[RMDB]
RNA sequence: GGGAACGACUCGAGUAGAGUCGAAAAGCCUUGUUGUUCGCAACAAGGCAAAUGGGACGGCUCGGGAGGGGGAUACUCGCGGUCCCAAGAAGAAUCCAGACUAAAGGCCAAGGUUCGCCUUGGCCAACUCCUACAUAGUGUUCGCACUAUGUAGGAGAAAAGAAACAACAACAACAAC
Reactivity to DMS in 0.01 (KOAc 150mM, MgCl2 10mM, bicine 150mM(pH8.5), 24C), signal-to-noise 2, nucleotides 027 to 126: g010c010c000u000u000g000u010u000g000u010u030c240g000c010a010a000c020a010a000g000g000c000a010a010a060u000g000g000g000a090c010g000g020c080u010c100g020g020g000a100g010g060g030g040g030a130u000a030c040u000c090g040c040g000g010u000c010c000c000a030a060g000a100a120g000a110a100u000c010c020a150g000a110c170u010a070a120a110g000g010c000c000a020a000g000g020u000u010c300g010c010c000u000u000g000g000c000c000a010a050
Reactivity to 2A3 in 0.01 (KOAc 150mM, MgCl2 10mM, bicine 150mM(pH8.5), 24C), signal-to-noise 2, nucleotides 027 to 126: g010c000c000u000u000g020u000u020g020u010u030c230g000c080a000a010c000a020a000g010g000c000a030a020a000u030g000g000g000a020c050g080g030c120u130c180g110g050g030a150g020g090g000g060g000a060u110a170c010u020c030g030c060g040g010u000c000c000c010a010a030g100a030a010g090a020a040u060c030c020a010g080a110c070u140a110a090a140g000g000c020c000a000a000g030g010u020u070c190g040c010c000u000u000g000g000c000c000a000a000